The data come from the RNA Mapping Database (RMDB), library OK2TST. Chemical mapping of a 177-nucleotide RNA with 2A3 and DMS. In probing experiments dimethyl sulfate is read out at A N1 and C N3, which are open when not base-paired. DMS adducts were read by reverse transcription with MarathonRT.

RNA sequence: GGGAACGACUCGAGUAGAGUCGAAAACUCCGGCAGCAAUGGCGCCGUGAAGAAGGUCAUCAGGCUGUUGCGCAUCAGUUGGCCGACCAACUGCGCGAGGUGGCGCGGCGUCGGGCGCAGCAACCGACAUACCCCGUCAGUUCGCUGACGGGGUAUGAAAAGAAACAACAACAACAAC
Reactivity to 2A3 in 0.01 (KOAc 150mM, MgCl2 10mM, bicine 150mM(pH8.5), 24C), signal-to-noise 3, nucleotides 027 to 126: c010u000c020c000g010g040c030a150g010c030a050a300u200g180g020c030g000c030c000g050u110g050a040a090g100a030a010g050g060u060c050a080u030c050a070g040g000c010u010g010u040u010g000c020g010c010a090u090c070a060g150u150u180g090g000c030c000g010a070c020c000a040a040c010u030g020c040g010c020g070a210g080g190u200g060g020c020g000c010g010g000c010g020u010c000g000g010g020c010g000c000a000g000c000a000a010c010c000g010a010
Reactivity to DMS in 0.01 (KOAc 150mM, MgCl2 10mM, bicine 150mM(pH8.5), 24C), signal-to-noise 5, nucleotides 027 to 126: c040u000c030c010g010g010c020a110g030c070a130a070u010g010g010c040g010c020c010g000u000g000a090a110g010a120a060g020g010u000c060a080u010c120a120g010g030c030u000g020u000u000g010c020g010c020a120u020c140a110g020u010u000g010g010c030c070g000a060c010c010a100a060c020u010g000c070g020c030g020a120g000g010u010g000g010c020g000c040g000g000c060g000u000c010g010g000g000c020g000c010a020g000c020a020a030c020c010g010a230

Reactivities are given for positions 27 through 126.